[RMDB]
About this RNA: Structure probing data (2A3) for a 207-nucleotide construct. The reactions ran in a buffer of 150 mM KOAc, 10 mM MgCl2 and 150 mM bicine (pH 8.5), at 24 C. For 2A3, 445 sequencing reads were counted.
RNA sequence: GGGAACGACUCGAGUAGAGUCGAAAAGUCCCCAGUAUGACGUUAAACUGCUUACUCAUACAUACUGACACCGGUUGCUCAACAGGCUGUGUGGGACAAUAGAAUAACAAGGCUGUCAAUUUGAGCUAAAACUCCUCGGGGUUCGCCCCGAGGAGAACCACCGUAUGUUGUUCGCAACAUACGGUGGAAAAGAAACAACAACAACAAC
Reactivity to 2A3 in 0.01 (KOAc 150mM, MgCl2 10mM, bicine 150mM(pH8.5), 24C), signal-to-noise 1, nucleotides 027 to 156: g130u030c000c010c010c010a020g000u010a000u020g020a050c020g040u040u230a140a110a230c060u130g000c070u230u030a030c030u040c110a000u040a240c000a000u030a000c040u040g060a050c040a090c100c020g080g030u080u150g000c000u020c050a020a020c000a040g100g000c000u000g000u000g010u050g180g000g070a030c000a130a190u180a080g100a050a000u020a120a000c000a040a000g060g000c000u000g070u230c010a040a040u090u050u030g020a010g000c000u040a100a110a060a290c010u020c000c000u000c000g000g000g000g020u080u020c150g110c010c000c000c000g000a000g000g000a000g000a000a000